The data come from the RNA Mapping Database (RMDB), library TTRDEL. Structure probing data (DMS and 2A3) for a 177-nucleotide construct. Values are in units of 0.01, from 0 to 300, in steps of 10. Values cover nucleotides 27 to 126. 2A3 adducts were read by reverse transcription with SuperScript II with manganese.

RNA sequence: GGGAACGACUCGAGUAGAGUCGAAAAGAUAUGGAAGCCCACUUUUGACGCUACGAAGGUCGGAAACGAUGUUGACGUAGCGAUAAGUGGAGCUUCCUAAGUCAAAACGUCAGCUUCGGCUGACGAACUCUCAAUGGGAGUUCGCUCCCAUUGAGAGAAAAGAAACAACAACAACAAC
Reactivity to DMS in 0.01 (KOAc 150mM, MgCl2 10mM, bicine 150mM(pH8.5), 24C), signal-to-noise 2, nucleotides 027 to 126: g000a020u000a300u010g010g020a060a030g000c040c000c000a000c010u000u000u010u010g000a190c090g030c000u000a000c000g030a300a040g020g020u000c020g010g000a090a110a180c000g000a010u000g010u000u030g000a220c080g000u000a000g020c030g000a020u020a010a010g030u010g000g000a100g020c020u000u000c000c010u000a010a090g010u020c040a060a080a100a250c010g000u000c020a010g030c010u000u010c180g010g000c010u000g000a000c010g000a020a090
Reactivity to 2A3 in 0.01 (KOAc 150mM, MgCl2 10mM, bicine 150mM(pH8.5), 24C), signal-to-noise 2, nucleotides 027 to 126: g000a010u050a020u180g020g000a020a000g020c000c010c000a000c000u050u040u060u180g240a100c040g000c010u010a000c000g070a090a010g140g000u000c000g000g010a010a070a030c000g020a010u040g190u300u120g190a130c040g000u000a000g010c020g000a020u010a000a010g010u010g000g030a070g010c000u000u030c000c000u010a030a000g030u000c010a030a000a090a140c010g010u000c010a010g000c000u060u140c220g200g000c020u020g000a000c000g000a000a000